[RMDB]
This 207-nucleotide RNA was probed chemically with DMS and 2A3.
Source: RMDB library RNAMAK, as collected in RNAgym.
The 2A3 profile rests on 4,371 reads.
RNA sequence: GGGAACGACUCGAGUAGAGUCGAAAAUUCGAUAAUUCGUUAUCGAAAAAAACCGUAGGCGAUUCGUCAAGGACUAUGAAGUUGGCUUCGAAAGAGGCCAAUGGAGUCCUCUGACGAGAUCGCCUAAACGGAAAAAAGGUAACCUUCGGGUUACCAACAUAAUAUCUUGGUUCGCCAAGAUAUUAUGAAAAGAAACAACAACAACAAC
Reactivity to DMS in 0.01 (KOAc 150mM, MgCl2 10mM, bicine 150mM(pH8.5), 24C), signal-to-noise 2, nucleotides 027 to 156: u000u000c000g010a020u000a010a060u000u010c210g030u010u000a000u000c010g020a010a000a070a130a130a070a190c010c010g040u010a050g010g020c000g050a030u000u000c010g030u010c000a080a020g000g020a030c000u020a170u000g010a150a300g000u000u000g010g010c000u000u000c010g010a160a100a260g010a000g010g000c000c000a000a000u010g010g010a030g030u000c000c000u000c090u000g010a040c000g010a040g010a010u000c010g000c010c000u000a000a000a050c000g000g000a000a040a090a100a090a090g000g010u000a010a000c000c000u000u000c300g060g020g000u000u000a000c000c000a030a070
Reactivity to 2A3 in 0.01 (KOAc 150mM, MgCl2 10mM, bicine 150mM(pH8.5), 24C), signal-to-noise 3, nucleotides 027 to 156: u030u010c000g000a000u020a010a050u070u060c060g030u060u010a000u010c010g010a070a030a010a000a000a010a030c020c000g000u010a040g000g000c000g000a000u010u010c000g010u000c000a010a000g020g000a000c000u030a190u300g030a020a020g000u000u000g000g010c000u000u000c010g050a080a070a070g000a000g010g000c030c000a000a000u020g000g000a010g000u000c000c000u020c060u000g010a000c000g000a000g000a000u000c000g030c000c000u000a000a010a000c010g010g050a070a060a000a130a020a050g020g000u010a010a000c030c000u060u150c300g090g000g000u000u000a000c000c000a000a000